[RMDB]
RNA sequence: GGGAACGACUCGAGUAGAGUCGAAAAGAUAUGGACUAGAGGUAUUCCACGAGGAUCUCGGAAACGAGGGAGUGGGAUACUACCCACCUAGUCCUAAGUCAAACUCGACGUCUUCGGACGUCGAGAAGUUACCGUGUAUGUUCGCAUACACGGUAACAAAAGAAACAACAACAACAAC
Reactivity to DMS in 0.01 (KOAc 150mM, MgCl2 10mM, bicine 150mM(pH8.5), 24C), signal-to-noise 3, nucleotides 027 to 126: g000a080u010a300u010g000g010a010c000u000a000g000a090g020g020u000a010u000u000c000c000a010c010g020a120g010g000a010u010c000u000c000g010g000a120a100a180c020g000a020g010g020g000a040g020u000g000g010g000a000u000a000c000u010a020c020c060c060a300c080c010u000a000g020u000c000c000u020a010a060g010u010c080a100a060a190c010u000c000g000a000c000g000u000c000u000u010c240g040g000a000c020g000u000c010g000a000g000a000a040
Reactivity to 2A3 in 0.01 (KOAc 150mM, MgCl2 10mM, bicine 150mM(pH8.5), 24C), signal-to-noise 2, nucleotides 027 to 126: g050a070u190a160u240g000g000a010c000u010a000g010a020g000g000u020a020u000u000c000c000a020c010g080a300g060g010a010u010c010u000c010g020g050a040a070a050c010g010a020g000g000g000a010g000u000g000g020g000a000u000a000c000u000a010c010c000c010a030c010c000u000a000g010u000c000c010u040a140a000g100u050c110a120a050a100c000u010c000g000a000c000g000u000c000u040u070c300g110g000a000c000g000u000c010g010a000g020a010a000

An RNA of 177 nucleotides, treated with DMS and 2A3 and read out base by base. For 2A3 the reverse transcriptase was SuperScript II with manganese. Reactivities are given for positions 27 through 126. The reactions ran in a buffer of 150 mM KOAc, 10 mM MgCl2 and 150 mM bicine (pH 8.5), at 24 C. For DMS, 2,783 sequencing reads were counted.